[RMDB]
RNA sequence: GGGAACGACUCGAGUAGAGUCGAAAAGGUCUGCCAGCGGCAGGUGAGUUUCUCGAUAUGAUCACCCCACAAUAUCUCGCUGACCUGAUGAGCUGGGGCGCAAUUGGCGCACGUACCACCGAAUCGCCCAGGAACUAUCAUUCGUGAUAGUUCCUGGAAAAGAAACAACAACAACAAC
Reactivity to 2A3 in 0.01 (KOAc 150mM, MgCl2 10mM, bicine 150mM(pH8.5), 24C), signal-to-noise 3, nucleotides 027 to 126: g020g000u020c020u040g100c030c000a020g020c030g060g030c030a000g050g000u070g040a010g010u030u190u010c100u060c050g020a030u020a020u050g060a060u100c080a190c000c000c040c010a020c030a050a030u080a010u060c030u000c030g030c030u030g050a020c000c010u030g010a100u080g060a080g070c020u040g030g000g010g000c000g000c020a060a240u180u190g190g000c000g000c010a020c050g030u030a030c000c020a010c030c020g040a030a080u080c040g080c030
Reactivity to DMS in 0.01 (KOAc 150mM, MgCl2 10mM, bicine 150mM(pH8.5), 24C), signal-to-noise 4, nucleotides 027 to 126: g010g020u000c040u010g010c020c010a050g010c050g020g040c030a010g000g030u000g000a030g000u000u000u010c050u010c150g000a030u000a020u010g000a140u020c090a300c040c010c000c030a110c170a130a030u000a040u000c000u000c070g000c020u000g000a020c010c010u010g010a060u000g010a140g020c000u000g000g000g020g000c030g020c010a200a200u010u010g000g000c020g010c040a170c110g020u010a050c030c000a220c070c030g000a100a090u010c130g020c210